[RMDB]
RNA sequence: GGGAACGACUCGAGUAGAGUCGAAAAAGAGUCAGCUGGAACGGACAGAGAGGAGGAUUAGAAGGUUUGCGACAAAAGGGAUGGAGUGUGGUAAAUUUACUGGUUAUCGAGAGAGAGUCCCGGAUUACCACUCCUACUACUUCGGUAGUAGGAGUGGAAAAGAAACAACAACAACAAC
Reactivity to DMS in 0.01 (KOAc 150mM, MgCl2 10mM, bicine 150mM(pH8.5), 24C), signal-to-noise 2, nucleotides 027 to 126: a090g010a070g010u000c060a080g030c060u000g000g000a110a070c110g010g010a070c050a100g000a130g000a060g020g020a060g020g000a060u020u020a120g000a050a070g030g000u000u000u010g030c100g000a070c130a020a070a090a130g000g010g000a060u020g010g000a060g000u010g000u000g000g000u000a030a050a050u000u000u000a070c080u000g000g010u000u000a100u000c030g010a060g010a080g010a080g010a100g010u010c040c000c030g020g010a120u000u000a140
Reactivity to 2A3 in 0.01 (KOAc 150mM, MgCl2 10mM, bicine 150mM(pH8.5), 24C), signal-to-noise 2, nucleotides 027 to 126: a000g080a000g040u070c010a010g000c020u070g020g030a080a040c060g020g060a020c040a040g090a000g000a000g080g000a010g000g010a030u050u040a070g070a140a050g050g020u020u060u020g050c020g030a020c050a000a140a020a040g020g000g040a000u050g030g010a040g020u060g010u070g010g030u040a090a100a030u120u100u100a080c050u020g030g040u060u060a070u080c090g000a060g000a010g000a010g010a020g090u010c010c000c050g000g020a040u090u090a060